Overview
Structure probing data (DMS and 2A3) for a 207-nucleotide construct. In probing experiments dimethyl sulfate is read out at A N1 and C N3, which are open when not base-paired. High 2A3 reactivity points to a flexible backbone, as in loops and unpaired stretches. DMS adducts were read by reverse transcription with MarathonRT. For 2A3 the reverse transcriptase was SuperScript II with manganese. For DMS, 1,446 sequencing reads were counted.
RNA sequence: GGGAACGACUCGAGUAGAGUCGAAAAGAUCGUAAACAGCAGCAGGUGAGUCCGCCUUAUGUGAAGGAUCGGCUGAAACACGAGGAAAUACUGAGCCAACGCAAGACGGUAGCCGAACAGUAGCAACAAAACGCUUACGUGUUCGCACGUAAGCGAAGUUCUAUCCGAUGUUCGCAUCGGAUAGAACAAAAGAAACAACAACAACAAC
Reactivity to DMS in 0.01 (KOAc 150mM, MgCl2 10mM, bicine 150mM(pH8.5), 24C), signal-to-noise 1, nucleotides 027 to 156: g000a030u000c070g000u040a140a090a110c040a150g050c080a080g000c030a090g030g030u020g010a060g050u000c050c000g050c010c000u100u010a100u010g040u000g010a100a200g050g000a080u000c060g000g020c090u000g000a120a060a060c090a120c060g010a130g000g020a030a050a090u000a060c110u000g030a140g020c070c000a040a180c030g040c010a040a080g000a190c030g020g010u000a020g050c020c000g030a010a040c050a090g020u000a060g020c080a090a200c000a090a120a110a090c020g000c000u010u020a000c000g050u000g040u000u000c170g000c010a040c000g060u000a000a020g000c000g000a000a030
Reactivity to 2A3 in 0.01 (KOAc 150mM, MgCl2 10mM, bicine 150mM(pH8.5), 24C), signal-to-noise 3, nucleotides 027 to 156: g050a030u060c020g010u050a030a040a090c020a020g050c030a000g010c020a010g020g030u020g030a050g030u040c040c050g020c020c000u130u150a150u170g120u080g100a040a050g010g020a030u050c040g030g020c040u050g040a070a090a000c060a030c070g020a030g000g090a020a060a050u180a070c070u040g010a010g030c020c010a040a030c030g000c030a000a050g020a040c050g070g020u030a000g020c030c020g010a030a010c010a040g040u050a010g040c020a010a080c000a050a090a030a050c020g000c010u000u010a000c000g000u010g000u040u020c130g010c050a000c000g000u000a000a000g030c000g000a020a000